An RNA of 177 nucleotides, treated with 2A3 and read out base by base. The reactions ran in a buffer of 150 mM KOAc, 10 mM MgCl2 and 150 mM bicine (pH 8.5), at 24 C. For 2A3, 310 sequencing reads were counted.
RNA sequence: GGGAACGACUCGAGUAGAGUCGAAAAGAUCAUUGUCGUGUUCUCCUUGUUUCAAACAAGGAAAGACGGCGAUCAAUUUGAAUGUCGUGCAAGGUGUAUGUCGGUCUACGGGGUACGGCGACCCGUCGAUCCCGCGGUCAUUCGUGACCGCGGGAUCAAAAGAAACAACAACAACAAC
Reactivity to 2A3 in 0.01 (KOAc 150mM, MgCl2 10mM, bicine 150mM(pH8.5), 24C), signal-to-noise 1, nucleotides 027 to 126: g000a010u120c120a120u100u230g000u000c060g000u000g070u120u000c000u080c140c000u070u010g060u000u000u090c190a300a080a000c000a010a010g000g000a000a000a000g110a000c000g000g000c000g000a000u060c120a120a220u090u000u190g280a300a120u040g000u000c040g080u060g090c050a030a110g010g000u070g080u060a180u080g000u010c060g050g010u010c000u000a040c080g010g010g010g010u000a040c000g000g050c000g020a090c000c000c000g000u000c070